[RMDB]
RNA sequence: GGGAACGACUCGAGUAGAGUCGAAAAUAACAUGUAUCUCUGGUCCACAGUAUAACUCCUAAUCAAUAUAAUAAGAGAGACAGUAACUAAUAUCCAAUUAGCUUUUAAUCUUAUUUAUUGGAAAUUCCUUAUACUGUGGAUUCGUCCACAGUAUAAGAAAAGAAACAACAACAACAAC
Reactivity to 2A3 in 0.01 (KOAc 150mM, MgCl2 10mM, bicine 150mM(pH8.5), 24C), signal-to-noise 1, nucleotides 027 to 126: u040a000a020c030a040u130g080u150a130u000c040u000c030u100g010g030u040c030c040a090c050a050g040u030a070u020a080a010c000u030c030c000u030a060a140u190c000a010a010u000a040u090a110a080u030a060a000g000a010g000a000g020a000c020a010g010u040a070a070c040u030a030a100u000a080u140c020c110a060a190u000u000a000g000c020u020u130u060u040a030a030u090c000u030u020a030u120u060u040a060u030u020g000g080a070a120a080u130u050c000
Reactivity to DMS in 0.01 (KOAc 150mM, MgCl2 10mM, bicine 150mM(pH8.5), 24C), signal-to-noise 2, nucleotides 027 to 126: u010a070a150c100a100u000g010u000a050u010c030u010c060u000g020g010u000c020c070a040c060a060g010u010a070u010a090a120c120u010c010c010u000a060a130u010c000a010a020u000a010u020a010a010u000a010a000g010a020g000a300g000a060c150a050g020u000a060a230c020u010a010a010u000a080u010c120c180a020a050u010u010a030g000c030u000u000u000u000a030a290u000c000u000u000a010u000u000u000a000u010u020g000g010a060a070a130u020u000c080
Source information: The record gives the reactivity of an RNA of 177 nucleotides to 2A3 and DMS. The data come from the RNA Mapping Database (RMDB), library OK2TRN.